This 177-nucleotide RNA was probed chemically with DMS. The DMS profile rests on 579 reads.

RNA sequence: GGGAACGACUCGAGUAGAGUCGAAAACAUCUCAGUACCCGCAGGAAGAGAAAACAACCGUGAUUCCGGGAGUAGUGGCGAGCGAAACCGGAUGAGGCCAAACCUACGACGUGUGAGACCCGGCAGGUGAAUUAAACCUCUUCGGAGGUUUAAUUCAAAAAGAAACAACAACAACAAC
Reactivity to DMS in 0.01 (KOAc 150mM, MgCl2 10mM, bicine 150mM(pH8.5), 24C), signal-to-noise 1, nucleotides 027 to 126: c170a200u000c030u000c030a060g030u020a160c090c030c040g040c030a070g020g000a080a070g020a120g000a110a080a100a070c070a090a100c030c020g000u010g010a170u000u000c050c010g020g020g030a070g000u000a090g010u000g010g030c230g020a240g000c000g000a200a100a130c000c010g010g020a000u010g000a140g000g020c040c060a080a130a130c070c030u000a040c070g000a030c120g030u000g010u000g000a110g020a100c010c040c010g030g000c120a080g020g000

DMS adducts were read by reverse transcription with MarathonRT.